[RMDB]
RNA sequence: GGGAACGACUCGAGUAGAGUCGAAAAGCGCGGGCCGGCUGGGCCACUCCUCGACCGCCGUCCCCACCCCUCUGGUUGGGGCCGCGCCGGCGCGGACUCCUGCAGUCCGGGGCGGCGGGUCUACGCACACUAUGAUGAGGUUCGCCUCAUCAUAGUGAAAAGAAACAACAACAACAAC
Reactivity to DMS in 0.01 (KOAc 150mM, MgCl2 10mM, bicine 150mM(pH8.5), 24C), signal-to-noise 2, nucleotides 027 to 126: g010c100g020c060g000g020g030c030c010g010g040c020u010g040g010g020c040c060a060c120u000c050c050u000c100g010a060c000c010g020c010c000g010u010c020c000c000c070a140c030c010c020c100u010c170u000g020g010u010u000g020g000g000g010c020c000g030c030g020c020c040g020g030c030g020c020g000g000a040c010u000c030c130u000g020c110a030g000u000c040c030g000g010g010g000c010g010g000c000g000g010g010u000c010u010a060c130g010c110a250
Reactivity to 2A3 in 0.01 (KOAc 150mM, MgCl2 10mM, bicine 150mM(pH8.5), 24C), signal-to-noise 2, nucleotides 027 to 126: g070c020g020c070g000g000g000c040c010g050g060c060u140g020g020g040c070c020a070c050u080c010c020u030c030g060a060c020c020g020c000c000g060u100c020c020c010c000a060c010c010c000c040u080c040u200g260g010u060u150g010g000g020g020c010c010g130c020g000c030c040g100g050c140g020c030g010g000a030c000u040c050c160u120g070c070a000g000u070c040c020g010g000g000g080c030g000g000c000g000g000g000u000c040u040a060c060g020c040a050

An RNA of 177 nucleotides, treated with DMS and 2A3 and read out base by base. 2A3 adducts were read by reverse transcription with SuperScript II with manganese. The data come from the RNA Mapping Database (RMDB), library OK2TRN.